[RMDB]
RNA sequence: GGGAACGACUCGAGUAGAGUCGAAAAAUGCCGCGGUGGCGGAAGCGAAGGCGGCACUUGGCGGAUCGGAUAUUUCGGCCAUCAAGUCGGCGAUGGAGAAGCUGGGCCAGGAGUCGCAGGCUCUGGGGUACCAUGAACAGUUCGCUGUUCAUGGUACAAAAGAAACAACAACAACAAC
Reactivity to DMS in 0.01 (KOAc 150mM, MgCl2 10mM, bicine 150mM(pH8.5), 24C), signal-to-noise 3, nucleotides 027 to 126: a100u010g000c010c020g030c060g020g000u010g000g010c020g000g020a100a040g010c070g040a180a110g010g010c010g010g000c040a060c040u010u000g000g010c010g010g010a150u050c000g000g010a120u050a110u010u020u020c040g000g000c010c000a010u010c060a060a040g000u010c080g000g000c040g020a060u000g010g000a300g000a060a080g010c050u000g000g000g030c050c020a070g000g000a060g020u020c020g010c080a100g000g010c010u000c020u010g000g020g010
Reactivity to 2A3 in 0.01 (KOAc 150mM, MgCl2 10mM, bicine 150mM(pH8.5), 24C), signal-to-noise 7, nucleotides 027 to 126: a000u100g010c010c010g010c020g040g100u130g080g000c030g050g030a080a010g030c040g110a110a020g100g000c000g000g000c010a000c020u020u060g030g000c020g100g080a180u080c010g030g020a050u040a140u270u080u040c030g090g040c040c000a020u030c030a030a050g150u150c040g080g040c050g040a040u080g030g000a050g000a060a020g020c040u050g010g060g010c010c010a030g030g020a030g000u000c000g000c090a020g040g000c010u000c020u050g030g000g040